[RMDB]
RNA sequence: GGGAACGACUCGAGUAGAGUCGAAAAGCUGUGGCAUCUCCCCACAGAGGGCGAACAAGGGCAGCAAGGCUACGGAGAGGCUGAAGAAGAAGCUGUCGGAGCAGGAGUCACUGCUGCUGCUUAUGUCCAACUAUCCAUGGUUCGCCAUGGAUAGUUGAAAAGAAACAACAACAACAAC
Reactivity to 2A3 in 0.01 (KOAc 150mM, MgCl2 10mM, bicine 150mM(pH8.5), 24C), signal-to-noise 4, nucleotides 027 to 126: g020c010u010g000u030g040g010c010a100u020c030u020c020c020c030c000a010c000a010g080a050g040g030g010c030g050a070a030c070a090a100g030g000g000c010a010g010c010a010a060g040g000c010u050a010c050g020g020a060g000a040g060g000c010u080g030a090a050g080a070a030g050a060a020g090c010u030g070u070c040g000g030a030g010c020a020g010g070a020g050u070c060a050c230u090g010c010u010g000c000u020g020c020u080u070a120u200g050u020c010
Reactivity to DMS in 0.01 (KOAc 150mM, MgCl2 10mM, bicine 150mM(pH8.5), 24C), signal-to-noise 6, nucleotides 027 to 126: g010c010u000g020u000g000g010c120a130u000c050u000c030c060c010c030a060c070a030g000a150g010g010g010c050g000a090a100c150a110a140g010g010g010c010a020g020c030a060a120g020g010c010u000a060c090g000g000a050g000a110g000g000c040u000g010a110a110g010a150a120g010a110a090g010c020u000g010u000c040g000g010a060g010c030a050g000g000a060g020u000c130a140c170u010g000c010u000g000c010u000g000c020u000u000a090u000g000u010c050
Structure probing data (2A3 and DMS) for a 177-nucleotide construct.
Reactivities are rounded to 0.1 and cut off at 0 and 3.
Conditions: 150 mM KOAc, 10 mM MgCl2 and 150 mM bicine (pH 8.5), 24 C.
2A3 adducts were read by reverse transcription with SuperScript II with manganese.